The data come from the RNA Mapping Database (RMDB), library OK1LIB. Chemical mapping of a 177-nucleotide RNA with 2A3.
RNA sequence: GGGAACGACUCGAGUAGAGUCGAAAAAGAUGACUGUUCAAUUGCUCUAGGACGAAUUCAUCUAUAAAGCGUGGUUUUGCUCUUGGUAUUUUCGGAUAGUCCUCAGAAUAAAUUAAUAUUUUGGAAGGUCCAUGCUCACAUUCGUGUGAGCAUGGACAAAAGAAACAACAACAACAAC
Reactivity to 2A3 in 0.01 (KOAc 150mM, MgCl2 10mM, bicine 150mM(pH8.5), 24C), signal-to-noise 1, nucleotides 027 to 126: a000g000a030u020g000a000c000u020g000u020u080c000a030a030u000u150g000c030u040c010u070a000g000g050a040c000g060a000a000u130u150c040a030u000c060u070a080u260a300a180a000g100c000g010u090g000g060u010u000u000u270g030c040u050c000u060u000g020g010u030a110u040u090u040u140c070g000g000a000u000a030g000u000c000c090u000c000a030g050a030a030u110a090a160a020u080u160a030a100u170a220u120u070u120u120g110g000a050a000g090
Description:
The reactions ran in a buffer of 150 mM KOAc, 10 mM MgCl2 and 150 mM bicine (pH 8.5), at 24 C.